[RMDB]
RNA sequence: GGGAACGACUCGAGUAGAGUCGAAAAACGGUCAUAUACGUAUGACCGAAUGAGCAUAACAGGGCCACCCCAAAGCGUUCACAUUGUGGCCCCUGUCAGCUUCUGGUAAAUCUGCGAGUUCUGCUAAAUUAGGUAACUCUCUUCGGAGAGUUACCAAGUAGUUUCAUAUCUUCGGAUAUGAAACUACAAAAGAAACAACAACAACAAC
Reactivity to DMS in 0.01 (KOAc 150mM, MgCl2 10mM, bicine 150mM(pH8.5), 24C), signal-to-noise 1, nucleotides 027 to 156: a130c030g020g040u010c010a000u000a060u020a120c260g030u000a020u000g010a010c040c010g030a020a040u010g000a070g040c010a150u000a060a070c050a020g000g000g000c010c030a090c040c000c020c020a100a040a180g020c050g020u020u000c070a120c060a230u020u000g000u010g040g000c130c020c010c020u010g000u000c030a130g010c020u010u000c100u000g000g030u000a040a120a010u010c040u010g010c000g000a200g010u000u000c090u030g000c090u000a060a080a150u000u010a110g000g020u000a000a020c010u000c000u000c010u000u000c280g030g020a070g020a040g010u000u000a000c000c000a000a020
Reactivity to 2A3 in 0.01 (KOAc 150mM, MgCl2 10mM, bicine 150mM(pH8.5), 24C), signal-to-noise 4, nucleotides 027 to 156: a000c000g000g000u000c020a010u030a000u030a030c230g120u030a030u000g000a000c000c000g020a010a090u090g010a000g020c020a080u040a250a030c010a010g010g000g010c010c000a040c020c020c020c030a050a100a030g150c080g090u190u160c080a090c050a160u060u160g000u010g010g000c060c020c000c000u020g000u020c030a020g010c010u110u040c030u120g000g030u090a110a120a060u090c060u070g050c060g020a060g060u050u080c040u040g040c040u080a120a160a110u160u170a090g000g010u000a000a000c000u000c000u000c020u020u060c150g030g000a000g000a000g000u000u000a000c000c000a000a000